[RMDB]
RNA sequence: GGGAACGACUCGAGUAGAGUCGAAAACGGAGCUGGACGUGGCCGCGGUGGAGUGGCUGCAGCAAGCGCGCUCUAUCAUCGACUCGCACCCGCUAACGGCGCGCAUCGACGACCGCGGGCCCAUGGAGCCCUUUGCGGAGCGCAUCGACGCGCUGCGUAGUGCUAACAAGUUCGCUUGUUAGCACUAAAAAGAAACAACAACAACAAC
Reactivity to 2A3 in 0.01 (KOAc 150mM, MgCl2 10mM, bicine 150mM(pH8.5), 24C), signal-to-noise 2, nucleotides 027 to 156: c070g060g030a050g010c030u040g020g080a050c020g040u060g020g000c010c000g020c050g040g220u270g130g120a190g020u040g030g000c060u110g000c010a090g010c040a080a020g040c070g010c000g000c030u020c010u010a010u120c070a050u040c010g010a000c010u010c010g000c030a120c030c000c000g000c140u130a130a030c030g010g000c000g000c000g010c020a040u010c000g030a020c000g000a000c000c000g000c020g000g010g020c000c000c020a120u120g090g030a040g000c030c010c000u120u190u150g020c030g010g020a120g050c030g000c080a070u000c030g020a020c030g010c010g000c000u000g050c000g030

An RNA of 207 nucleotides, treated with 2A3 and read out base by base. 2A3 adducts were read by reverse transcription with SuperScript II with manganese. The 2A3 profile rests on 1,415 reads. Conditions: 150 mM KOAc, 10 mM MgCl2 and 150 mM bicine (pH 8.5), 24 C.